[RMDB]
RNA sequence: GGGAACGACUCGAGUAGAGUCGAAAAGAUAUGGACAAACACAGAGUGUUCCUCAUGCUACCCACCAUUGAGUGUCGGAAACGACACCAAUGAGGCAUGAGGGAACACUCUGUGUUUGUCCUAAGUCCAGUAAGUCAGUGUUCGCACUGACUUACUGAAAAGAAACAACAACAACAAC
Reactivity to DMS in 0.01 (KOAc 150mM, MgCl2 10mM, bicine 150mM(pH8.5), 24C), signal-to-noise 3, nucleotides 027 to 126: g000a080u000a300u000g010g000a020c000a010a010a010c010a000c000a000g010a030g010u000g000u000u000c000c010u010c000a000u010g000c010u000a060c080c030c120a300c120c010a000u000u000g000a170g040u000g010u010c000g000g000a100a080a210c000g000a010c000a000c000c000a000a010u000g010a120g020g010c000a000u000g000a060g010g020g010a000a010c020a000c000u000c000u000g000u000g000u000u000u000g020u000c010c010u000a000a060g000u020c040